Structure probing data (DMS and 2A3) for a 177-nucleotide construct. Source: RMDB library OK2TST, as collected in RNAgym. The reactions ran in a buffer of 150 mM KOAc, 10 mM MgCl2 and 150 mM bicine (pH 8.5), at 24 C. Reactivities are given for positions 27 through 126.
RNA sequence: GGGAACGACUCGAGUAGAGUCGAAAACCGCUCCCGGUAUUAUUUCGAGACGUUCUGUAUAUGAGCCUCUUCAAACAGGACUUAUUGCUAUUGAUUCGAUGAUCCCUAUAGGGCGCGGCCAGCGAGACGUACAAUGGCGAUUCGUCGCCAUUGUACGAAAAGAAACAACAACAACAAC
Reactivity to DMS in 0.01 (KOAc 150mM, MgCl2 10mM, bicine 150mM(pH8.5), 24C), signal-to-noise 1, nucleotides 027 to 126: c020c000g030c040u000c000c020c030g050g010u010a040u000u010a060u000u010u000c010g000a070g020a110c130g000u000u000c020u010g010u000a080u010a040u000g010a040g010c100c030u010c040u000u000c190a070a090a150c250a010g020g010a060c020u030u000a060u020u000g020c060u010a040u010u000g000a100u000u010c020g000a090u000g000a090u010c000c000c020u010a160u000a150g000g030g010c050g000c020g000g000c110c040a090g020c100g000a120g000a170
Reactivity to 2A3 in 0.01 (KOAc 150mM, MgCl2 10mM, bicine 150mM(pH8.5), 24C), signal-to-noise 1, nucleotides 027 to 126: c020c000g000c060u020c040c010c010g010g020u070a070u130u010a040u000u200u040c030g010a030g000a030c010g010u040u000c010u060g040u000a160u010a060u300g040a010g000c000c030u030c000u100u030c040a060a040a040c020a080g040g000a090c020u020u030a050u100u060g040c030u030a070u160u170g050a060u120u000c030g030a040u070g020a020u030c020c000c000u110a150u080a220g040g020g000c010g010c000g030g000c030c000a060g030c050g030a140g000a040